[RMDB]
RNA sequence: GGGAACGACUCGAGUAGAGUCGAAAAGCGGAGGCUUCGGCCUCCGCAACCUCUCGUACGCGAGAGGAAGUGCACGUACGCGUGCACAGACAACUACUACGGUAGUUGUCAGUAAGAUCGUUCGCGAUCUUACAACAGUAAGCGUGAGCUUACUGAGCUCGCCGUUCGCGGCGAGCAAGAUUGUCGGUGACGACAAUCAACAAAAAAGAUAGAAAUUAUUCUUGUCUACUACGGUAGACAAGCGGGGUGGCUCCCCUAACAGCCGAACCAGAUCGUUCGCGAUCUGGAAAAGAAACAACAACAACAAC
Reactivity to 2A3 in 0.01 (KOAc 150mM, MgCl2 10mM, bicine 150mM(pH8.5), 24C), signal-to-noise 4, nucleotides 027 to 266: g010c010g000g010a010g020g000c030u100u140c300g170g000c040c000u010c000c000g010c000a000a000c000c000u000c000u000c000g010u010a040c220g000c020g100a000g000a000g010g000a080a030g000u000g000c000a000c000g020u050a020c300g010c000g100u000g000c000a000c000a000g010a010c000a000a000c000u000a000c000u020a030c210g140g000u000a000g010u000u010g000u000c000a010g000u000a000a000g000a010u000c000g010u060u070c230g010c010g100a010u010c000u000u000a010c020a100a040c000a010g000u000a000a000g010c020g030u100g080a010g020c000u000u010a000c000u000g010a030g010c000u000c000g000c020c020g030u060u060c240g020c000g120g020c010g000a010g000c000a000a010g000a000u000u000g000u010c000g000g090u070g070a020c010g000a000c000a000a000u010c010a000a060c030a000a130a070a030a040a030g110a040u300a070g110a100a230a090u300u180a220u270u070c020u010u010g000u020c000u000a010c000u010a000c230g080g000u010a000g000a020c010a010a000g030c060g010g000g000g000u000g000g000c030u300c050c000c010c010u030a040a000c010a030g000c000c000g010a010a010